An RNA of 177 nucleotides, treated with 2A3 and DMS and read out base by base.
RNA sequence: GGGAACGACUCGAGUAGAGUCGAAAAUAUGCCAUACAGUCUCCCUUGAGUAGAUGUUCUGUAUAGGGGAUAUCACAGCUUCCUGGUGAGAACUGGGUUAAGUCCAGCAGGAUGCCUGGGCUUAGUGAUUUCCUAGUUAGUUCGCUAACUAGGAAAUAAAAGAAACAACAACAACAAC
Reactivity to 2A3 in 0.01 (KOAc 150mM, MgCl2 10mM, bicine 150mM(pH8.5), 24C), signal-to-noise 6, nucleotides 027 to 126: u140a070u090g080c000c010a030u070a140c020a070g010u000c010u010c010c020c000u020u030g040a020g020u060a030g000a040u030g030u030u010c030u040g180u120a160u140a300g100g030g020g020a010u020a000u020c020a030c020a060g020c010u170u120c040c020u030g020g010u180g040a020g010a060a060c020u020g020g050g000u030u030a000a000g010u000c000c010a000g000c010a020g130g300a140u140g020c030c010u000g000g010g000c000u000u010a020g010u020g080
Reactivity to DMS in 0.01 (KOAc 150mM, MgCl2 10mM, bicine 150mM(pH8.5), 24C), signal-to-noise 9, nucleotides 027 to 126: u010a080u010g010c010c010a150u010a300c040a040g000u000c020u000c010c010c010u000u000g010a080g010u000a060g000a020u000g010u000u000c010u000g010u010a170u000a160g010g010g000g010a030u000a010u000c010a110c120a180g000c060u000u010c020c020u000g000g010u010g010a070g010a070a070c020u000g000g000g020u010u000a010a020g010u000c000c000a020g020c030a190g010g020a160u010g000c160c020u000g000g000g010c000u000u000a010g010u010g000